[RMDB]
RNA sequence: GGGAACGACUCGAGUAGAGUCGAAAAGGGCUGGCAAUCUUUUUCUGUAAACGAACAGAUGGUAAAUAUUUUAGGUUUGCAGACCAUACUGUCUUUGUUGGAACUAGUCAGUUCUGCUGUUGUAGGGUAGAAACAGCCGUAGACACUGUGUAAAUCACGUAGUUUUAAAUUUCGAUUUAAAACUACGAAAAGAAACAACAACAACAAC
Reactivity to 2A3 in 0.01 (KOAc 150mM, MgCl2 10mM, bicine 150mM(pH8.5), 24C), signal-to-noise 4, nucleotides 027 to 156: g020g020g010c060u040g040g020c010a040a110u050c030u040u110u000u060u010c020u040g040u060a080a090a070c050g050a040a050c060a080g080a090u060g020g040u130a060a200a100u170a290u160u150u150u150a040g100g000u040u030u090g040c010a010g020a040c000c000a050u110a220c040u040g010u030c000u090u080u060g060u020u060g020g040a110a050c020u040a030g160u070c030a000g000u040u000c000u010g000c020u000g000u060u020g020u060a100g050g050g100u080a060g140a070a090a000c000a000g010c030c020g000u030a020g020a020c070a010c070u030g010u040g050u180a080a050a050u200c150a060
Reactivity to DMS in 0.01 (KOAc 150mM, MgCl2 10mM, bicine 150mM(pH8.5), 24C), signal-to-noise 2, nucleotides 027 to 156: g000g010g050c020u000g010g010c080a140a130u000c010u000u000u000u000u000c020u020g000u000a080a060a080c040g000a070a080c100a080g010a040u010g010g000u000a070a110a110u000a070u000u020u000u000a170g010g020u000u000u010g020c100a100g010a060c050c060a160u000a070c030u020g020u000c010u000u000u000g020u000u030g000g000a070a050c010u000a120g010u000c050a060g010u000u000c040u000g030c000u010g030u010u000g010u000a080g010g020g010u010a110g000a170a060a040c020a050g020c030c030g030u000a120g020a110c110a050c040u010g000u010g020u000a040a080a090u000c060a130